[RMDB]
RNA sequence: GGGAACGACUCGAGUAGAGUCGAAAAGUUAUGCUCUCGCUGCCUAAUGGCGGUGCGGGAAACCCACUCUAAGGUCCUUAGGGUUAGCCCCUUAAGGCGGGGUUCGGAGGCACCUGGCAACAGAAGCUGAAACUGUGCACAUUCGUGUGCACAGUAAGAAAUAUGAGUACUUCGGUACUCAUAUUUCAAAAGAAACAACAACAACAAC
Reactivity to 2A3 in 0.01 (KOAc 150mM, MgCl2 10mM, bicine 150mM(pH8.5), 24C), signal-to-noise 5, nucleotides 027 to 156: g060u110u110a140u290g060c000u020c000u010c020g000c030u020g010c000c010u300a300a210u300g020g000c050g010g060u050g000c010g010g020g000a050a040a030c000c030c000a050c030u150c110u130a130a140g130g120u090c000c000u010u010a000g000g000g040u020u080a040g040c000c000c010c010u010u040a010a000g000g000c000g000g000g000g000u020u160c080g080g000a050g050g000c000a010c000c000u030g220g000c000a000a000c000a020g020a000a010g010c010u020g000a080a010a000c000u000g000u000g010c010a000c000a010u040u110c200g080u050g010u000g030c000a000c000a000g000u010a000a030
Reactivity to DMS in 0.01 (KOAc 150mM, MgCl2 10mM, bicine 150mM(pH8.5), 24C), signal-to-noise 2, nucleotides 027 to 156: g010u010u000a070u020g010c010u000c030u000c050g040c030u010g020c010c020u000a090a160u000g040g020c070g050g050u000g000c040g000g010g000a060a020a090c000c010c000a110c030u010c010u010a030a080g010g020u000c030c060u000u000a080g020g010g000u000u000a130g010c090c100c000c010u010u000a000a020g030g030c040g020g010g020g010u000u010c030g040g010a260g030g010c020a030c010c030u010g000g000c030a060a100c040a080g010a040a120g030c010u010g010a140a070a070c040u000g020u000g010c010a020c010a100u000u000c260g040u010g040u000g010c000a000c010a000g020u000a010a110
An RNA of 207 nucleotides, treated with 2A3 and DMS and read out base by base. For DMS, 5,829 sequencing reads were counted. DMS (dimethyl sulfate) methylates the pairing face of unpaired adenines and cytosines. The RNA was probed in 150 mM KOAc, 10 mM MgCl2 and 150 mM bicine (pH 8.5) at 24 C. For DMS the reverse transcriptase was MarathonRT. 2A3 adducts were read by reverse transcription with SuperScript II with manganese. Values cover nucleotides 27 to 156.